Conditions: 150 mM KOAc, 10 mM MgCl2 and 150 mM bicine (pH 8.5), 24 C. Structure probing data (DMS and 2A3) for a 177-nucleotide construct.
RNA sequence: GGGAACGACUCGAGUAGAGUCGAAAAUGAUCGAGAGAUCUAAUUAUGUACGCGAGUCAAGUGCACAGACUCGAGCGAAAGCUCGGUCGAAAGACCGCGUACAUGUGGCGGCAAGUGUACAGUCGAAGGCCUAUAAUGGAUUCGUCCAUUAUAGGCCAAAAGAAACAACAACAACAAC
Reactivity to DMS in 0.01 (KOAc 150mM, MgCl2 10mM, bicine 150mM(pH8.5), 24C), signal-to-noise 3, nucleotides 027 to 126: u010g000a000u000c020g000a300g000a250g000a030u010c010u010a070a060u000u000a060u000g000u000a010c000g030c010g020a030g000u000c000a040a080g030u020g030c060a040c050a300g000a000c000u000c010g010a010g010c000g000a130a080a130g000c000u000c010g010g000u010c010g000a080a090a120g010a000c000c010g000c000g010u000a000c000a000u000g010u000g010g030c010g000g000c010a040a050g000u000g000u000a030c010a260g000u000c020g020a160a110
Reactivity to 2A3 in 0.01 (KOAc 150mM, MgCl2 10mM, bicine 150mM(pH8.5), 24C), signal-to-noise 1, nucleotides 027 to 126: u090g000a000u010c000g000a000g020a010g000a070u010c000u010a060a060u170u250a030u050g010u000a000c010g000c000g000a020g020u010c020a060a220g040u020g020c030a020c010a010g000a000c010u040c060g000a000g010c000g060a170a020a000g000c020u000c010g000g000u000c040g000a010a000a000g010a000c000c010g000c000g000u010a000c020a000u000g030u030g080g030c030g020g000c020a140a180g020u020g010u050a050c030a020g000u020c030g070a100a060